[RMDB]
RNA sequence: GGGAACGACUCGAGUAGAGUCGAAAAGGCUGCAGGACAUCGGGAUGAAAACCUCUUUCAGCAGGGACGAAGCGUGAGUGUCGAUACCUGAAGCAGAUGCACCGGCUAACUCCGCACUAACAGCCGCUAUAUUAUUGAUAUUCGUAUCAAUAAUAUAAAAAGAAACAACAACAACAAC
Reactivity to DMS in 0.01 (KOAc 150mM, MgCl2 10mM, bicine 150mM(pH8.5), 24C), signal-to-noise 9, nucleotides 027 to 126: g010g000c010u000g010c060a050g010g000a100c080a040u020c050g010g000g010a090u010g000a080a060a090a120c070c050u000c040u000u020u010c070a100g030c080a050g010g000g000a100c070g000a080a120g000c110g010u030g000a130g020u020g010u000c020g000a080u020a100c030c020u000g010a080a080g010c070a070g000a080u010g000c040a080c040c010g000g000c050u000a100a080c060u000c010c010g000c030a070c070u010a070a100c110a070g010c020c020g000c140
Reactivity to 2A3 in 0.01 (KOAc 150mM, MgCl2 10mM, bicine 150mM(pH8.5), 24C), signal-to-noise 9, nucleotides 027 to 126: g060g000c010u030g000c030a020g020g030a040c010a070u050c040g020g000g040a050u090g090a060a060a060a070c010c010u040c020u030u130u090c050a050g000c030a020g030g010g030a030c040g050a070a020g040c040g050u150g050a090g030u100g050u040c020g010a030u070a140c000c010u030g030a050a010g030c030a010g010a060u100g020c010a020c020c000g000g000c000u010a020a010c010u000c010c010g030c010a020c030u060a070a010c010a030g030c010c010g000c010
Record summary:
An RNA of 177 nucleotides, treated with DMS and 2A3 and read out base by base. The RNA was probed in 150 mM KOAc, 10 mM MgCl2 and 150 mM bicine (pH 8.5) at 24 C.